Structure probing data (2A3 and DMS) for a 177-nucleotide construct. For DMS, 12,218 sequencing reads were counted. Source: RMDB library OK2TST, as collected in RNAgym.

[RMDB]
RNA sequence: GGGAACGACUCGAGUAGAGUCGAAAAGGCGGCUGCCAACCGAUGGACGCAUUAAUUGAAGGUAAUCGACGACAAUGAGGUUUAGCCCUCUGGUUCGUGCCAACCUUCGGCAUCGUGUGCGCAUAACGUAGAUAGUCUCAUUCGUGAGACUAUCUACAAAAGAAACAACAACAACAAC
Reactivity to 2A3 in 0.01 (KOAc 150mM, MgCl2 10mM, bicine 150mM(pH8.5), 24C), signal-to-noise 9, nucleotides 027 to 126: g070g000c060g040g060c120u140g010c010c020a030a010c030c020g030a050u060g050g060a050c040g030c060a060u120u150a160a090u080u170g010a010a010g020g000u060a090a080u120c090g070a030c010g000a010c030a050a130u160g010a010g030g010u130u170u300a070g090c010c000c000u000c000u010g030g030u130u010c010g000u010g080c020c020a040a040c020c000u010u010c010g010g010c020a050u060c060g040u020g020u050g090c030g000c040a070u070a190a020c090
Reactivity to DMS in 0.01 (KOAc 150mM, MgCl2 10mM, bicine 150mM(pH8.5), 24C), signal-to-noise 8, nucleotides 027 to 126: g020g020c050g000g020c080u010g020c030c030a160a170c040c020g000a060u000g010g010a140c070g010c090a060u000u010a090a120u010u000g010a020a000g000g000u000a080a100u010c120g010a050c010g000a030c010a060a060u000g010a020g010g010u000u000u010a190g010c300c000c000u000c010u000g010g020u020u000c010g010u000g010c130c120a060a040c000c000u000u000c010g010g000c110a040u000c100g010u000g010u000g000c040g020c060a090u010a070a090c220